[RMDB]
RNA sequence: GGGAACGACUCGAGUAGAGUCGAAAACUGGGAUGUGCCAUUUAACCUUUGAAACAGCCGGGUGCGGUGGUGAAGUUACUUGCCUUGCCCGAGGUCACUCGGUAGUAGUAAUUGACAAAGCCAGGUCUCACUGCAGAGGCCUUCUCUGUUCAGAGUGUACAGUCUAUCUUUUCGAAGAUAGACUGUAAAAAGAAACAACAACAACAAC
Reactivity to DMS in 0.01 (KOAc 150mM, MgCl2 10mM, bicine 150mM(pH8.5), 24C), signal-to-noise 2, nucleotides 027 to 156: c040u000g010g030g010a080u000g040u000g040c020c040a080u000u000u000a080a120c020c010u000u000u010g020a130a120a100c040a160g000c040c010g010g010g020u030g010c000g030g030u000g020g010u010g030a030a060g020u000u020a080c160u000u000g000c000c040u000u000g000c010c000c020g000a090g030g020u010c090a030c010u010c000g020g020u000a080g010u000a100g030u000a040a090u000u020g020a070c010a050a040a110g010c070c080a050g020g020u000c020u000c000a110c090u010g020c150a220g020a040g010g020c040c020u000u000c000u000c000u000g040u000u000c070a070g000a160g000u000g000
Reactivity to 2A3 in 0.01 (KOAc 150mM, MgCl2 10mM, bicine 150mM(pH8.5), 24C), signal-to-noise 3, nucleotides 027 to 156: c010u020g000g010g060a080u080g040u080g100c030c020a080u040u080u070a090a100c020c000u100u060u130g180a190a130a000c060a070g000c050c000g000g020g000u060g010c030g000g070u140g020g000u050g050a070a000g070u080u170a150c100u140u130g080c020c000u000u030g020c000c000c000g050a080g030g060u110c010a010c030u000c010g020g000u010a010g000u010a000g000u010a030a160u090u110g040a050c070a040a080a030g060c060c030a010g020g030u020c010u010c010a050c050u170g000c020a040g030a040g040g000c010c020u050u000c000u010c000u010g070u080u090c050a040g040a030g150u160g050
Record summary
Structure probing data (DMS and 2A3) for a 207-nucleotide construct. Reactivities are given for positions 27 through 156. The reactions ran in a buffer of 150 mM KOAc, 10 mM MgCl2 and 150 mM bicine (pH 8.5), at 24 C.